[RMDB]
RNA sequence: GGGAACGACUCGAGUAGAGUCGAAAACCAGCUUGUUCUUGAGGCUGGGCUUCAUCCAACGUCCUAGAUAUGCGCGUGAGGAUGAUCUUGGUGAAUACUUUGUAUAACGCGCUCAGCAAGCGGACGGGGGAUAUUUACGGUUCGCCGUAAAUAUCCCAAAAGAAACAACAACAACAAC
Reactivity to DMS in 0.01 (KOAc 150mM, MgCl2 10mM, bicine 150mM(pH8.5), 24C), signal-to-noise 3, nucleotides 027 to 126: c000c010a060g020c120u020u000g000u020u020c050u010u010g010a150g030g010c000u020g020g000g040c020u000u000c130a040u000c020c000a160a130c020g000u040c130c030u020a110g000a100u010a070u020g010c260g000c000g000u000g010a100g000g010a040u020g000a040u000c020u010u000g000g000u030g000a120a040u020a020c040u000u010u000g010u030a040u020a260a050c060g000c000g000c010u000c080a020g020c040a100a100g000c120g000g030a030c030g000g000
Reactivity to 2A3 in 0.01 (KOAc 150mM, MgCl2 10mM, bicine 150mM(pH8.5), 24C), signal-to-noise 5, nucleotides 027 to 126: c000c000a010g020c070u090u120g080u160u130c070u070u140g120a030g000g070c010u010g030g020g000c010u060u070c010a030u020c000c000a020a040c030g080u070c040c020u080a080g070a210u230a080u290g060c060g000c000g020u040g030a130g050g040a050u030g000a020u020c080u070u120g140g020u160g060a100a060u150a120c060u040u070u190g090u060a060u030a140a040c020g010c000g000c040u000c000a030g030c010a050a040g060c040g020g010a020c030g070g030
This 177-nucleotide RNA was probed chemically with DMS and 2A3. In probing experiments dimethyl sulfate is read out at A N1 and C N3, which are open when not base-paired. 2A3 adducts were read by reverse transcription with SuperScript II with manganese. Reactivities are given for positions 27 through 126.